[RMDB]
Annotation
Conditions: 150 mM KOAc, 10 mM MgCl2 and 150 mM bicine (pH 8.5), 24 C. Structure probing data (2A3) for a 177-nucleotide construct. Values cover nucleotides 27 to 126. As a SHAPE reagent, 2A3 marks flexible, mostly unpaired nucleotides at the ribose 2'-OH. The 2A3 profile rests on 721 reads.
RNA sequence: GGGAACGACUCGAGUAGAGUCGAAAAAAGUCCAUGCUUAUUAUUGCUUUCCUGCUUGCCACUGUAGCAGGAGGGCCAGAGGCAGGACUAAGAGCAAAUCUUCCUCUCAGAUUAGGAGGGCUGUCCUAGUUGAUGAUGCGUUCGCGCAUCAUCAACUAAAAGAAACAACAACAACAAC
Reactivity to 2A3 in 0.01 (KOAc 150mM, MgCl2 10mM, bicine 150mM(pH8.5), 24C), signal-to-noise 2, nucleotides 027 to 126: a000a000g010u000c030c000a250u050g000c020u060u080a120u180u070a190u040u300g000c000u000u010u000c000c010u000g010c000u020u140g160c100c020a130c090u240g020u220a000g000c000a000g000g000a000g000g000g000c010c020a020g030a010g030g000c000a010g000g010a000c000u010a080a000g130a050g000c000a030a030a290u050c000u030u010c060c000u010c000u040c060a020g050a300u110u180a050g030g070a000g000g040g000c010u040g030u000c000c000u000